[RMDB]
The data come from the RNA Mapping Database (RMDB), library OK1LIB. The record gives the reactivity of an RNA of 177 nucleotides to 2A3. For 2A3, 270 sequencing reads were counted.

RNA sequence: GGGAACGACUCGAGUAGAGUCGAAAAACAAGGCUUUGAUAUCUAAAUAUGCGGGAAUUAAUAUCCUGAAUGUGUAUUCUCCUUCCACGUCCAUGAGAUUGAAUGCCAUUUACGGAUUCACCAAUAAUCGGGCAGUUACAUUCGUGUAACUGCCCGAAAAAGAAACAACAACAACAAC
Reactivity to 2A3 in 0.01 (KOAc 150mM, MgCl2 10mM, bicine 150mM(pH8.5), 24C), signal-to-noise 1, nucleotides 027 to 126: a060c150a110a020g210g000c030u210u100u100g040a000u000a000u090c000u090a000a180a130u110a150u060g040c130g040g030g010a000a110u100u300a110a070u110a000u100c000c000u100g000a130a110u040g230u000g000u000a020u150u010c000u060c000c030u070u140c090c000a040c300g100u130c060c000a070u130g220a220g000a070u060u240g000a000a000u000g040c000c000a020u070u070u000a020c000g000g000a000u000u060c000a040c090c190a070a050u000a090a040

The RNA was probed in 150 mM KOAc, 10 mM MgCl2 and 150 mM bicine (pH 8.5) at 24 C.